[RMDB]
RNA sequence: GGGAACGACUCGAGUAGAGUCGAAAAACUCUUGGCUUGCAGGAAUUCCUCAUUUGAGGCAUCGUAAUUGUUUGGUCUGCCCUUGACAAGUUGGUGUGAAGGUUGGGUCUUGCGCAAUGGGAACCUUGUGAACCAUGUCAGGUCCGGAAGGAAGCAGCAUGACAUUCAACUUCGGUUGAAUGUCAUGAAAAGAAACAACAACAACAAC
Reactivity to 2A3 in 0.01 (KOAc 150mM, MgCl2 10mM, bicine 150mM(pH8.5), 24C), signal-to-noise 2, nucleotides 027 to 156: a000c040u060c000u030u060g040g000c030u030u060g000c030a010g030g030a130a220u020u060c010c010u010c000a150u110u100u250g040a040g000g000c020a070u110c060g040u090a140a080u110u110g040u130u060u090g030g010u030c010u020g030c050c000c000u060u110g020a020c010a110a050g030u010u030g100g030u090g000u050g030a060a040g040g000u070u030g070g000g000u020c000u040u030g020c060g020c020a000a090u030g020g000g010a030a050c020c020u090u040g080u070g080a020a010c010c000a010u040g040u090c060a010g020g040u000c030c000g040g010a030a040g020g010a010a010g010c000a000g040
Reactivity to DMS in 0.01 (KOAc 150mM, MgCl2 10mM, bicine 150mM(pH8.5), 24C), signal-to-noise 1, nucleotides 027 to 156: a080c060u000c030u000u000g040g010c060u010u000g040c050a030g040g000a130a140u000u000c010c000u020c080a250u010u000u010g000a070g030g020c050a070u000c050g030u010a130a140u000u010g000u000u000u000g010g040u030c020u010g000c020c000c020u010u020g020a060c090a060a150g010u000u000g010g000u010g020u000g030a020a080g010g010u010u000g020g000g000u000c030u000u000g040c030g010c040a100a050u000g020g000g010a060a070c050c020u000u010g040u020g000a050a040c020c000a130u000g000u000c060a160g030g030u000c030c030g040g000a080a090g000g010a070a050g030c090a190g000